[RMDB]
RNA sequence: GGGAACGACUCGAGUAGAGUCGAAAAAGCCACCGCUACGGCGGUGGAAAGUAGAAAAGUUGGUGCUUAGACCACGCCCUCUACCGUAAUAAUAGAUAAAUAGGCGAGUAUCAGUACGCUGAUACAAAAAACACUCACACGUUCGCGUGUGAGUGAAGGGUAUUAAUGAGUUCGCUCAUUAAUACCCAAAAGAAACAACAACAACAAC
Reactivity to 2A3 in 0.01 (KOAc 150mM, MgCl2 10mM, bicine 150mM(pH8.5), 24C), signal-to-noise 5, nucleotides 027 to 156: a010g020c000c000a000c000c000g000c000u020a030c250g100g000c010g010g020u010g000g000a000a020a000g000u010a000g010a020a000a000a010g050u080u030g040g010u090g060c210u210u100a050g050a060c000c000a000c010g000c000c010c000u010c000u000a010c030c010g080u080a070a060u050a150a020u020a220g080a060u070a110a100a010u030a020g000g020c050g010a010g010u000a010u000c010a000g020u030a020c190g030c120u000g000a000u010a020c000a000a230a010a010a010a000c010a000c000u010c000a000c000a000c000g030u060u060c170g020c000g100u010g000u000g000a000g000u000g000a010a010
Reactivity to DMS in 0.01 (KOAc 150mM, MgCl2 10mM, bicine 150mM(pH8.5), 24C), signal-to-noise 2, nucleotides 027 to 156: a240g020c020c000a030c010c000g030c010u000a060c290g060g000c010g020g060u010g020g000a010a010a070g020u000a090g000a060a050a090a120g030u010u000g030g000u010g000c060u000u000a130g010a050c010c050a080c000g020c010c000c050u000c030u000a000c000c000g020u010a160a150u030a110a290u000a050g000a050u010a060a040a080u020a100g000g000c000g050a090g010u000a010u000c000a020g020u000a080c300g060c020u000g000a010u000a030c010a010a020a080a050a050a100c020a010c000u000c010a000c000a020c000g030u010u010c280g000c020g030u010g000u000g010a020g010u000g000a020a040
Source: RMDB library M2RFPK, as collected in RNAgym.
Chemical mapping of a 207-nucleotide RNA with 2A3 and DMS.
For 2A3, 3,997 sequencing reads were counted.
The reactions ran in a buffer of 150 mM KOAc, 10 mM MgCl2 and 150 mM bicine (pH 8.5), at 24 C.